RNA sequence: GGGAACGACUCGAGUAGAGUCGAAAAGAUAUGGAGCUGACACUUCGAAGAACAUGAUGUGGGAAGAAGUAUGUCGGAAACGACAUAUGUAAACCACAUCAUGGGAGAAGGAGUCAGCUCCUAAGUCGUUAGUCUGUAAGUUCGCUUACAGACUAACAAAAGAAACAACAACAACAAC
Reactivity to 2A3 in 0.01 (KOAc 150mM, MgCl2 10mM, bicine 150mM(pH8.5), 24C), signal-to-noise 3, nucleotides 027 to 126: g090a020u170a070u220g000g000a000g000c010u000g000a000c000a010c040u030u020c020g270a300a060g040a090a000c010a000u000g000a000u000g010u020g000g010g010a200a300g010a000a010g250u030a010u000g000u010c000g000g010a050a070a010c020g000a010c010a010u010a000u050g000u000a000a020a000c000c010a000c000a000u010c010a000u000g000g000g000a060g000a000a000g010g100a220g000u000c000a000g000c000u000c000c000u000a010a000g010u010c010
Reactivity to DMS in 0.01 (KOAc 150mM, MgCl2 10mM, bicine 150mM(pH8.5), 24C), signal-to-noise 4, nucleotides 027 to 126: g000a100u020a300u010g010g000a020g030c000u010g000a000c010a220c000u000u000c010g010a070a190g000a110a270c010a000u010g020a010u000g010u000g010g000g000a010a060g000a260a300g000u000a030u000g000u000c010g000g010a170a070a220c020g000a000c000a000u000a000u000g010u000a010a090a300c000c000a010c000a000u000c000a000u000g000g010g020a070g010a050a000g000g000a250g000u000c000a000g000c000u010c000c000u010a000a120g010u000c120
The record gives the reactivity of an RNA of 177 nucleotides to 2A3 and DMS. The RNA was probed in 150 mM KOAc, 10 mM MgCl2 and 150 mM bicine (pH 8.5) at 24 C. For DMS, 2,688 sequencing reads were counted. It was measured as part of the RMDB library TTRINS. Reactivities are rounded to 0.1 and cut off at 0 and 3.